An RNA of 177 nucleotides, treated with DMS and read out base by base.
Values cover nucleotides 27 to 126.
DMS adducts were read by reverse transcription with MarathonRT.
For DMS, 2,617 sequencing reads were counted.
RNA sequence: GGGAACGACUCGAGUAGAGUCGAAAAGAUAUGGAGUUAUCAGCUGUCAUUGAGCGAUAAGCGAUAAUGGGUCGGAAACGACCUUAUCGCUUUUGACGCUCAUUGACAGCUGAUAACUCCUAAGUCAGAAGAUUGAAAGGUUCGCCUUUCAAUCUUCAAAAGAAACAACAACAACAAC
Reactivity to DMS in 0.01 (KOAc 150mM, MgCl2 10mM, bicine 150mM(pH8.5), 24C), signal-to-noise 2, nucleotides 027 to 126: g000a050u000a300u000g000g000a030g000u000u000a000u000c010a020g020c000u000g000u000c000a020u000u000g010a010g040c000g020a120u010a020a020g020c010g000a020u000a010a120u010g020g000g000u000c000g000g000a170a100a300c000g000a010c010c000u000u000a000u000c000g010c000u000u000u000u000g010a140c060g020c000u020c000a010u000u010g000a000c010a010g020c000u010g000a000u000a000a020c000u000c000c000u000a000a060g000u000c100a180